[RMDB]
An RNA of 177 nucleotides, treated with DMS and 2A3 and read out base by base.
The 2A3 profile rests on 1,383 reads.
The reactions ran in a buffer of 150 mM KOAc, 10 mM MgCl2 and 150 mM bicine (pH 8.5), at 24 C.
2A3 adducts were read by reverse transcription with SuperScript II with manganese.
RNA sequence: GGGAACGACUCGAGUAGAGUCGAAAAUCACAAAGCGGAUUUAGCUCGGUUGGGAGAGGUCCAGACCGAAGAUCUGGUUGUCCUGUGUCCGACGCACAGAAUUCGCACCAUAAACAACGGGAGAUUCGAUCAGGAGUGGUUUCGACCACUCCUGAUCAAAAGAAACAACAACAACAAC
Reactivity to DMS in 0.01 (KOAc 150mM, MgCl2 10mM, bicine 150mM(pH8.5), 24C), signal-to-noise 1, nucleotides 027 to 126: u080c140a050c230a080a150a080g000c000g050g120a000u020u020u020a110g050c000u000c050g000g000u030u000g020g020g020a020g000a130g000g030u060c040c000a040g150a000c000c000g030a120a300g040a230u000c000u000g030g000u030u000g000u040c000c000u000g000u000g000u050c040c010g000a000c250g000c040a080c230a110g000a090a000u000u000c000g030c030a040c130c000a090u000a040a200a010c020a140a010c220g000g000g040a200g150a100u000u010c200
Reactivity to 2A3 in 0.01 (KOAc 150mM, MgCl2 10mM, bicine 150mM(pH8.5), 24C), signal-to-noise 3, nucleotides 027 to 126: u090c020a020c100a100a030a000g000c010g000g060a020u020u040u050a000g030c000u000c000g000g000u040u190g040g040g010a030g000a010g010g160u070c000c000a000g010a000c040c130g300a100a050g020a130u000c020u020g010g000u000u020g080u090c000c010u040g010u010g030u060c000c000g040a030c060g000c010a040c020a050g020a000a000u000u050c000g000c020a070c000c000a020u280a060a080a080c150a070a020c070g030g120g030a140g020a130u090u200c050